[RMDB]
RNA sequence: GGGAACGACUCGAGUAGAGUCGAAAAAAACAGACACAAGAGAGGCCUUGAGCUUGAUGGACAGGGUUAUAGCUGUGGAUCAGUUGACAUCAUCUUCUAGUGAUGAACUGCAAGACUAUGAAGACCUUGCCUUGGCACUCACAAGCGCAGAAGAAUCUGGGUACAUUACUUUCGAGUAAUGUACCCAAAAAGAAACAACAACAACAAC
Reactivity to 2A3 in 0.01 (KOAc 150mM, MgCl2 10mM, bicine 150mM(pH8.5), 24C), signal-to-noise 1, nucleotides 027 to 156: a000a000a040c120a020g090a010c060a000c060a120a060g060a000g000a010g060g000c020c000u030u030g040a060g030c030u040u070g010a020u070g030g020a010c020a070g020g010g000u040u000a070u020a040g000c000u070g040u050g300g000a090u060c020a010g070u010u070g080a060c000a030u030c000a000u010c000u180u010c070u180a030g070u010g030a020u020g010a010a030c000u020g010c020a050a010g010a110c030u030a060u250g050a040a040g020a000c000c000u020u050g000c000c000u000u060g020g000c020a030c040u130c040a040c030a000a000g030c030g000c050a000g000a110a000g000a000a040u000c000
Reactivity to DMS in 0.01 (KOAc 150mM, MgCl2 10mM, bicine 150mM(pH8.5), 24C), signal-to-noise 2, nucleotides 027 to 156: a080a050a050c030a110g000a160c030a070c050a100a130g000a100g020a120g010g010c020c050u030u020g010a050g000c000u000u010g020a300u000g020g000a060c060a060g020g010g000u010u000a080u010a070g040c030u000g050u030g010g020a100u010c020a080g020u000u000g000a080c040a040u000c000a040u020c030u020u000c150u000a100g000u020g010a050u000g000a070a070c040u000g010c020a070a100g000a050c020u000a060u010g010a070a080g000a020c010c040u010u000g010c000c040u020u000g010g020c290a050c020u000c020a070c040a070a050g000c050g010c040a080g000a060a080g000a050a100u010c020